[RMDB]
RNA sequence: GGGAACGACUCGAGUAGAGUCGAAAAGAGCUGAAGUACAGCAAGAACGACGGAAUCCUUGGCAAAGCGUCGAAGAUAAGCGUGCCGAGUGCCAAGGAUUAACGGCACGCGAGGCGAAGACGCCAGACGCGGGUAUAUACUUCGGUAUAUACCCGCGAAAAGAAACAACAACAACAAC
Reactivity to DMS in 0.01 (KOAc 150mM, MgCl2 10mM, bicine 150mM(pH8.5), 24C), signal-to-noise 2, nucleotides 027 to 126: g040a170g020c000u000g050a080a080g070u030a180c000a010g000c020a110a010g060a070a070c060g100a120c180g030g000a210a030u000c000c000u000u000g000g010c020a080a090a170g040c070g010u000c000g000a120a120g010a080u060a140a060g000c000g000u000g000c040c020g010a250g000u010g020c080c000a030a040g000g000a020u000u000a000a190c020g000g000c030a000c020g000c000g020a050g000g010c040g000a070a050g010a060c070g010c030c220a140g000a070
Reactivity to 2A3 in 0.01 (KOAc 150mM, MgCl2 10mM, bicine 150mM(pH8.5), 24C), signal-to-noise 3, nucleotides 027 to 126: g090a020g000c010u050g060a170a010g160u230a130c010a000g000c030a030a070g120a120a030c080g140a020c020g070g080a020a060u000c000c000u010u000g000g020c010a080a080a110g100c070g130u140c050g050a040a030g060a120u270a150a030g000c000g000u020g000c000c010g020a090g080u060g000c020c000a020a000g010g000a000u000u010a000a000c000g000g010c000a000c000g010c000g000a040g030g070c000g050a090a090g060a110c040g020c000c000a050g040a030